The data come from the RNA Mapping Database (RMDB), library M2RFPK. This 207-nucleotide RNA was probed chemically with DMS and 2A3. The DMS profile rests on 2,977 reads. For 2A3 the reverse transcriptase was SuperScript II with manganese. The reactions ran in a buffer of 150 mM KOAc, 10 mM MgCl2 and 150 mM bicine (pH 8.5), at 24 C. DMS adducts were read by reverse transcription with MarathonRT. Reactivities are given for positions 27 through 156.

[RMDB]
RNA sequence: GGGAACGACUCGAGUAGAGUCGAAAAUCCACUAUGAAUCUAGUCACUAAAUAAACACAAUUAGCUACUGUGUGUAAUAGUGAGUGUUGAUAACACAAAAUAAUUGUAUAGUUUUGGAAGAUUAUACGCGCCCUUGCUCCGUUCGCGGAGCAAGGAAGAAUUCUAUGUAGUUCGCUACAUAGAAUUCAAAAGAAACAACAACAACAAC
Reactivity to DMS in 0.01 (KOAc 150mM, MgCl2 10mM, bicine 150mM(pH8.5), 24C), signal-to-noise 2, nucleotides 027 to 156: u000c010c020a120c120u000a100u000g010a150a100u000c040u010a130g020u010c010a020c010u000a020a020a080u000a150a200a010c000a010c000a050a050u010u000a300g020c210u000a050c050u010g050u000g000u000g000u000a130a290u010a010g040u000g000a120g010u000g000u000u000g020a050u000a060a090c070a160c020a060a060a080a140u020a040a140u010u010g010u000a080u000a070g020u000u000u000u000g000g030a250a080g010a060u000u000a040u000a010c000g040c120g010c100c020c000u000u000g010c000u000c000c000g030u000u000c300g070c030g050g010a020g040c020a000a000g010g030a010a040
Reactivity to 2A3 in 0.01 (KOAc 150mM, MgCl2 10mM, bicine 150mM(pH8.5), 24C), signal-to-noise 5, nucleotides 027 to 156: u020c020c010a040c060u160a160u240g160a110a030u050c080u090a050g100u030c010a000c010u010a040a010a070u060a020a060a010c010a000c010a000a140u130u120a090g040c070u110a050c030u040g000u000g010u000g010u030a010a030u000a010g000u010g010a030g020u020g020u030u060g040a130u210a270a010c020a000c030a040a150a080a070u190a090a080u180u100g010u020a030u000a030g020u000u020u070u160g100g040a100a050g010a070u040u010a010u040a040c030g040c010g080c040c010c010u000u000g000c000u000c000c010g020u040u060c080g000c000g120g000a000g000c000a000a000g010g010a000a000